RNA sequence: GGGAACGACUCGAGUAGAGUCGAAAAAGCCAGUACGCUGGCAAGAGGGCCAGUUGAAGCAGGCAUGUCUUCAUUCCUGAUUUCCUGAUGGCAUGAAACACAUGGCCUGUUCCUAUUGGCACCUUAACAAUCUUCUUCAUUUCGAUGAAGAAGAUUGAAAAGAAACAACAACAACAAC
Reactivity to DMS in 0.01 (KOAc 150mM, MgCl2 10mM, bicine 150mM(pH8.5), 24C), signal-to-noise 7, nucleotides 027 to 126: a090g000c000c000a000g010u020a080c230g030c000u000g000g010c010a100a080g000a020g000g000g010c000c000a010g010u000u000g010a050a010g000c010a010g010g000c000a020u000g000u000c100u000u000c000a020u000u000c000c010u000g000a280u010u010u020c170c190u010g010a140u000g010g000c100a010u000g010a010a010a060c260a010c020a020u000g000g010c000c000u000g000u000u000c020c010u000a010u000u000g000g000c000a090c010c000u000u010a080a200
Reactivity to 2A3 in 0.01 (KOAc 150mM, MgCl2 10mM, bicine 150mM(pH8.5), 24C), signal-to-noise 9, nucleotides 027 to 126: a000g010c010c000a010g010u040a020c250g010c090u000g000g000c010a010a030g060a010g020g010g000c000c000a000g000u010u020g040a050a010g000c000a000g000g000c000a000u000g000u000c020u000u000c000a000u010u020c000c000u040g060a100u140u190u240c080c090u110g040a050u050g010g000c010a000u000g000a000a010a000c050a000c010a020u040g230g160c000c000u000g000u010u000c000c010u020a010u010u000g010g000c020a300c030c010u010u010a050a030

Description: Structure probing data (DMS and 2A3) for a 177-nucleotide construct. The data come from the RNA Mapping Database (RMDB), libraries RFM100 and RFMREP. Reactivities are given for positions 27 through 126.